[RMDB]
RNA sequence: GGGAACGACUCGAGUAGAGUCGAAAAGUUUCCGCUUUUUCGGAAAGCAUGUUGUCCAUACGCUCCAAAUCGCUCAAGCAUCUGCGCCGCUAUGCCAUUAUCGGCGGGCCUUUAUGGAUUCAGGCCAGACGCAUUACCCUUUCGAGGGUAAUGCGUCAAAAGAAACAACAACAACAAC
Reactivity to DMS in 0.01 (KOAc 150mM, MgCl2 10mM, bicine 150mM(pH8.5), 24C), signal-to-noise 1, nucleotides 027 to 126: g020u000u010u000c000c000g010c240u020u000u000u020u000c260g000g000a060a070a080g000c050a110u020g000u000u010g020u000c080c030a070u010a120c160g000c060u000c090c050a030a110a060u020c050g000c030u000c020a160a080g050c050a100u000c050u000g030c050g050c000c030g030c080u000a050u010g030c030c100a120u000u010a040u000c100g010g030c090g020g010g010c020c010u000u010u010a200u010g030g000a080u000u000c170a060g000g030c050c080a120

Chemical mapping of a 177-nucleotide RNA with DMS. DMS (dimethyl sulfate) methylates the pairing face of unpaired adenines and cytosines. Conditions: 150 mM KOAc, 10 mM MgCl2 and 150 mM bicine (pH 8.5), 24 C. For DMS, 729 sequencing reads were counted.